RNA sequence: GGGAACGACUCGAGUAGAGUCGAAAAAGUUAUGAGUUCGCUCAUAACUACAGCGAAAGGCGCUCGGACCCGCAGUCCGCCGAAGGCAUCCCAGGCUGUCCAAGUUGGUAUAUUUCGAUAUACCAAACAUGUGUUGGUAUUUCGAUACCAACACAUGAAAAGAAACAACAACAACAAC
Reactivity to 2A3 in 0.01 (KOAc 150mM, MgCl2 10mM, bicine 150mM(pH8.5), 24C), signal-to-noise 3, nucleotides 027 to 126: a000g000u000u000a000u000g000a000g030u050u130c200g070c090u000c000a000u010a000a000c000u000a010c000a000g030c020g080a110a050a030g080g000c030g010c070u050c080g070g020a060c020c010c060g030c050a010g030u000c010c020g010c020c000g040a030a030g130g030c020a020u030c020c000c000a010g060g020c030u050g020u030c020c020a090a070g080u030u020g020g000u010a000u000a010u030u100u060c170g040a010u010a000u010a010c000c000a000a020a000
Reactivity to DMS in 0.01 (KOAc 150mM, MgCl2 10mM, bicine 150mM(pH8.5), 24C), signal-to-noise 6, nucleotides 027 to 126: a040g000u000u000a000u000g000a020g010u000u010c220g030c000u000c010a010u000a000a010c000u010a050c110a260g010c030g010a050a080a100g000g010c140g010c050u000c060g000g010a050c030c140c070g000c070a080g000u010c050c030g020c110c020g000a090a100g000g000c080a060u000c030c000c010a120g000g000c050u000g000u000c060c040a120a130g010u000u000g010g000u000a000u000a020u000u000u010c170g010a010u010a010u000a010c000c000a010a030a140

About this RNA:
Source: RMDB library M2PK50, as collected in RNAgym. This 177-nucleotide RNA was probed chemically with 2A3 and DMS. For DMS, 6,572 sequencing reads were counted. Values cover nucleotides 27 to 126. For 2A3 the reverse transcriptase was SuperScript II with manganese.